[RMDB]
RNA sequence: GGGAACGACUCGAGUAGAGUCGAAAAGAUAUGGAGCUUCUGGAGCUGCGCUAUGUCGGAAACGACAUAGGCGACCCAGCGAUGAAGGAAGCUCCUAAGUCAAAACAUACCAGUUCGCUGGUAUGAACAUGGAAUGAAUGUUCGCAUUCAUUCCAUGAAAAGAAACAACAACAACAAC
Reactivity to DMS in 0.01 (KOAc 150mM, MgCl2 10mM, bicine 150mM(pH8.5), 24C), signal-to-noise 6, nucleotides 027 to 126: g000a030u000a100u010g000g000a030g020c000u000u000c000u000g000g000a030g020c010u000g040c040g020c000u000a010u000g020u000c000g010g000a030a030a070c000g010a010c000a010u000a020g020g010c020g000a220c300c260c110a030g020c010g000a070u010g010a170a210g000g000a030a010g010c000u010c000c000u000a000a070g000u000c020a110a080a110a210c010a000u000a010c000c000a010g010u000u010c230g010c000u000g010g010u000a000u000g010a070a180
Reactivity to 2A3 in 0.01 (KOAc 150mM, MgCl2 10mM, bicine 150mM(pH8.5), 24C), signal-to-noise 5, nucleotides 027 to 126: g020a000u020a020u070g000g000a010g000c000u000u000c010u030g030g000a020g000c070u180g060c240g020c040u000a010u010g000u000c000g010g000a030a010a010c010g010a000c010a010u010a050g060g160c000g030a050c060c130c030a010g000c010g300a300u020g000a000a000g010g000a000a000g000c000u010c000c000u000a000a000g000u000c000a000a030a020a090c010a000u000a000c010c010a010g020u040u040c300g010c060u010g000g000u010a010u010g000a020a030